Chemical mapping of a 177-nucleotide RNA with DMS and 2A3. Source: RMDB libraries RFM100 and RFMREP, as collected in RNAgym. 2A3 adducts were read by reverse transcription with SuperScript II with manganese. The RNA was probed in 150 mM KOAc, 10 mM MgCl2 and 150 mM bicine (pH 8.5) at 24 C.
RNA sequence: GGGAACGACUCGAGUAGAGUCGAAAAGUUUGCUAUGGAAAAAGUGGCGCCAAUCGAGAUUUUUGAGACCCUAGGCUCAAAAAUAAGGCAUAGAAUUCCAAAGGAAGUCGCUGCCGUGAGCACAACCAAGUAGGAGUAUCUUCGGAUACUCCUACUUAAAAGAAACAACAACAACAAC
Reactivity to DMS in 0.01 (KOAc 150mM, MgCl2 10mM, bicine 150mM(pH8.5), 24C), signal-to-noise 4, nucleotides 027 to 126: g010u010u010u010g010c000u000a090u020g010g000a060a060a050a130a060g020u010g000g010c050g020c020c030a120a120u030c110g000a080g000a060u000u000u000u000u000g010a040g000a070c020c050c100u010a070g020g000c000u010c000a000a010a010a020a030u010a070a110g000g010c040a060u010a090g000a100a090u000u010c010c020a050a150a160g000g000a030a060g010u000c020g000c030u000g000c030c010g000u000g000a030g040c030a030c140a050a080c080c110
Reactivity to 2A3 in 0.01 (KOAc 150mM, MgCl2 10mM, bicine 150mM(pH8.5), 24C), signal-to-noise 3, nucleotides 027 to 126: g040u040u060u060g010c020u040a060u100g030g050a070a090a020a000a070g020u030g040g030c020g000c010c020a030a030u100c050g050a040g010a210u000u040u020u020u010g070a070g040a090c030c030c090u070a110g060g000c000u010c010a000a000a010a000a000u080a070a040g040g000c040a060u080a060g110a040a110u100u040c030c000a090a040a030g050g000a080a030g040u030c000g020c010u030g010c000c020g010u050g040a000g000c020a020c010a070a040c030c010